RNA sequence: GGGAACGACUCGAGUAGAGUCGAAAAGAUAUGGAAGCGCCACCAGCGCUCGGAAACGAGAACUACGCUGUGGAACUACGCUUCCUAAGUCAAAACGUCCGUGUAAUGUUCGCAUUACACGGACGAAGAUAUCCAUACGCUUCGGCGUAUGGAUAUCAAAAGAAACAACAACAACAAC
Reactivity to 2A3 in 0.01 (KOAc 150mM, MgCl2 10mM, bicine 150mM(pH8.5), 24C), signal-to-noise 2, nucleotides 027 to 126: g000a020u080a030u150g000g010a000a000g020c030g010c030c020a040c060c110a050g020c030g000c040u000c000g020g060a060a110a020c020g030a000g020a150a080c190u290a050c260g000c020u000g020u070g010g000a030a010c110u230a030c150g010c000u000u000c000c000u000a070a010g030u020c040a000a000a080a100c030g000u000c010c000g030u000g010u010a000a010u020g080u060u120c300g000c130a000u020u000a000c000a000c000g000g010a000c000g000a000a000
Reactivity to DMS in 0.01 (KOAc 150mM, MgCl2 10mM, bicine 150mM(pH8.5), 24C), signal-to-noise 2, nucleotides 027 to 126: g000a020u000a300u000g000g040a010a030g010c010g000c030c060a050c120c130a020g020c000g000c000u010c010g000g000a070a040a230c040g000a030g020a150a060c170u030a300c030g000c010u000g000u000g020g050a120a010c090u000a270c060g000c000u000u000c000c000u000a010a100g000u000c040a050a050a080a180c010g000u000c000c010g010u000g000u000a010a010u010g000u000u020c170g020c010a020u000u000a000c000a000c000g020g000a000c000g000a010a010
An RNA of 177 nucleotides, treated with 2A3 and DMS and read out base by base. The RNA was probed in 150 mM KOAc, 10 mM MgCl2 and 150 mM bicine (pH 8.5) at 24 C. The DMS profile rests on 1,155 reads.